[RMDB]
RNA sequence: GGGAACGACUCGAGUAGAGUCGAAAAGGGCGCGCGUCGCGAUGGUCGCGCAGAUAGGCAUCGCUGACCAGGACCAAUCCCGCGCCGCCGUCGGUCAUCUGGCUGCAAUCAAACCGUCGCAGCCGGCUAUUUUACCGUAAUUCGUUACGGUAAAAUAAAAAGAAACAACAACAACAAC
Reactivity to DMS in 0.01 (KOAc 150mM, MgCl2 10mM, bicine 150mM(pH8.5), 24C), signal-to-noise 9, nucleotides 027 to 126: g010g010g010c010g010c150g030c060g020u010c040g020c050g010a130u000g010g010u000c020g020c080g010c210a050g000a090u010a110g010g010c080a120u000c040g010c010u010g020a050c040c060a140g000g000a100c070c080a070a120u010c060c070c030g010c030g010c030c020g010c020c020g020u010c060g010g000u010c100a100u010c030u000g010g010c000u000g010c010a100a070u010c100a080a100a180c130c100g000u000c090g010c010a020g010c010c000g010g000c300
Reactivity to 2A3 in 0.01 (KOAc 150mM, MgCl2 10mM, bicine 150mM(pH8.5), 24C), signal-to-noise 9, nucleotides 027 to 126: g090g000g000c020g000c010g000c020g030u050c010g010c020g020a030u050g020g010u050c030g000c010g000c180a010g050a090u170a050g110g040c070a080u080c080g010c090u090g040a120c020c030a050g080g050a020c010c010a030a150u100c040c030c000g000c010g000c000c010g010c000c000g030u060c030g020g060u090c050a140u040c060u040g000g000c000u010g000c010a020a080u110c060a100a140a170c060c040g070u070c070g000c000a000g000c000c010g000g000c000